Structure probing data (DMS and 2A3) for a 177-nucleotide construct. For DMS the reverse transcriptase was MarathonRT.
RNA sequence: GGGAACGACUCGAGUAGAGUCGAAAACGGAGGGCCACCUCGGUGUCACUUACGGCAGGAGUCGAGGGGCUGCUGCUUUGAGCGCGGCCCCCGGCUGGGCGCUGCAUCCAUGUAUUGAGCACAUCGGAUAUAUUACCGUUUUCGAACGGUAAUAUAUAAAAGAAACAACAACAACAAC
Reactivity to DMS in 0.01 (KOAc 150mM, MgCl2 10mM, bicine 150mM(pH8.5), 24C), signal-to-noise 9, nucleotides 027 to 126: c080g010g010a060g000g000g010c060c060a070c050c020u010c080g010g020u000g010u000c040a080c070u010u010a080c080g000g000c030a070g010g000a030g010u000c010g010a120g020g000g010g010c000u000g010c010u040g040c000u000u030u030g010a080g030c010g010c000g000g000c000c000c000c000c000g000g000c010u000g000g010g020c090g010c030u000g010c050a090u010c050c050a060u010g000u010a090u010u010g000a120g010c090a050c070a040u010c070g010g000
Reactivity to 2A3 in 0.01 (KOAc 150mM, MgCl2 10mM, bicine 150mM(pH8.5), 24C), signal-to-noise 9, nucleotides 027 to 126: c020g030g020a030g020g030g020c030c010a070c020c020u020c030g030g010u040g020u030c030a040c100u060u120a030c040g060g000c020a020g010g090a010g010u010c010g040a300g010g000g000g000c000u000g000c020u070g000c000u180u200u300g170a100g010c010g000c000g000g000c000c000c000c000c000g000g000c000u010g000g030g000c080g000c020u030g000c010a030u020c030c010a040u080g030u050a100u070u170g050a040g030c040a010c010a070u060c060g050g010